Structure probing data (DMS and 2A3) for a 177-nucleotide construct.
The 2A3 profile rests on 20,787 reads.
The RNA was probed in 150 mM KOAc, 10 mM MgCl2 and 150 mM bicine (pH 8.5) at 24 C.
For DMS, 34,522 sequencing reads were counted.
DMS adducts were read by reverse transcription with MarathonRT.

RNA sequence: GGGAACGACUCGAGUAGAGUCGAAAACGCGCGUCCGAAUUACCGCCCACGUGGUCAGCUGAGUAACCAUUCUUCACGUGGGACGCAUCCGAGAGUGGCUGGCCGGCAGUAGCCGAAGCGCGAGCAGUAAAUACAAUGUGUUCGCACAUUGUAUUUAAAAAGAAACAACAACAACAAC
Reactivity to DMS in 0.01 (KOAc 150mM, MgCl2 10mM, bicine 150mM(pH8.5), 24C), signal-to-noise 9, nucleotides 027 to 126: c080g020c050g010c020g010u000c030c020g020a080a080u010u010a120c250c060g010c030c000c070a030c040g020u000g010g010u010c090a050g020c150u000g010a090g010u010a080a130c190c130a190u010u000c030u000u010c030a020c040g010u000g000g000g000a030c070g010c090a080u000c070c040g010a090g010a090g020u000g010g010c020u000g010g020c040c020g000g010c030a120g010u010a080g010c020c020g010a070a100g010c070g010c040g000a120g010c110a110g010
Reactivity to 2A3 in 0.01 (KOAc 150mM, MgCl2 10mM, bicine 150mM(pH8.5), 24C), signal-to-noise 7, nucleotides 027 to 126: c030g020c010g010c010g040u030c020c030g040a040a030u160u070a110c040c010g040c010c020c010a040c040g040u060g010g060u110c050a020g010c060u070g050a020g080u060a050a050c030c010a060u090u060c020u110u100c020a010c050g000u010g010g010g030a010c020g020c020a050u040c040c040g090a080g000a010g120u080g050g000c020u020g040g000c000c000g020g000c020a050g110u180a030g010c010c020g060a070a030g010c020g000c020g040a020g020c030a010g050